[RMDB]
RNA sequence: GGGAACGACUCGAGUAGAGUCGAAAAGACACCGGCAGCGAAGAGCAUUCGUGAAUGUAGUUGGCUAUAGCUACGGUGCAGUCUUGAUUGCUGUUGCCCUCAAUAGUCACUUGCACUGCUUUAAGGCUGGAGAGUGGUUGUUCGCAACCACUCUCCAAAAAGAAACAACAACAACAAC
Reactivity to 2A3 in 0.01 (KOAc 150mM, MgCl2 10mM, bicine 150mM(pH8.5), 24C), signal-to-noise 1, nucleotides 027 to 126: g040a000c030a000c040c000g070g000c040a010g000c050g020a100a040g030a020g040c010a050u110u100c070g060u020g100a160a140u180g000u070a040g060u100u100g050g010c040u010a000u010a060g020c020u000a060c020g020g010u010g030c000a000g010u080c030u090u180g110a200u120u170g040c040u020g000u190u160g020c000c000c000u040c010a000a010u050a040g010u030c040a000c080u000u010g030c040a000c030u010g010c000u040u090u150a120a040g120g000c020
Reactivity to DMS in 0.01 (KOAc 150mM, MgCl2 10mM, bicine 150mM(pH8.5), 24C), signal-to-noise 1, nucleotides 027 to 126: g000a150c110a120c040c030g000g030c090a040g010c010g000a100a150g010a060g010c050a070u020u000c090g010u000g010a080a120u000g040u000a020g000u010u000g020g010c030u000a050u000a130g000c080u000a060c150g010g020u000g020c070a060g010u010c050u000u000g000a160u000u000g000c030u000g000u020u000g020c020c020c080u000c080a070a030u000a120g030u000c060a080c100u000u020g000c060a050c030u010g020c030u000u000u000a070a170g010g010c080